[RMDB]
RNA sequence: GGGAACGACUCGAGUAGAGUCGAAAAGAUAUGGACGAUCCUCCUGCGAGCUUGGACCUCGGAAACGAGCUAGCUCGAAGAGGAGUCGUCCUAAGUCAAAACUAACUACACUUCGGUGUAGUUAGAAGAAACUUCUACUGUUCGCAGUAGAAGUUUCAAAAGAAACAACAACAACAAC
Reactivity to 2A3 in 0.01 (KOAc 150mM, MgCl2 10mM, bicine 150mM(pH8.5), 24C), signal-to-noise 4, nucleotides 027 to 126: g030a000u080a030u100g010g000a010c010g000a010u040c000c010u030c020c060u250g220c080g010a000g000c010u100u140g070g140a280c040c020u010c010g020g010a050a060a020c010g000a010g030c000u010a000g000c000u000c010g030a080a020g020a000g020g020a020g050u060c000g000u000c000c000u000a050a020g030u000c030a010a000a110a180c000u000a000a000c000u010a000c010a000c010u040u120c300g090g000u020g000u000a000g000u000u010a000g000a020a010
Reactivity to DMS in 0.01 (KOAc 150mM, MgCl2 10mM, bicine 150mM(pH8.5), 24C), signal-to-noise 4, nucleotides 027 to 126: g000a050u010a300u000g000g010a020c010g000a110u000c010c010u000c020c050u000g020c020g000a010g010c000u000u010g040g010a080c300c000u000c010g000g000a090a100a180c000g010a010g010c030u000a020g010c010u010c000g010a140a050g000a020g000g000a020g010u010c010g010u000c000c000u010a010a050g000u000c040a100a080a100a200c010u000a000a010c000u000a010c000a020c000u000u020c190g010g020u000g000u000a000g000u000u000a000g000a050a100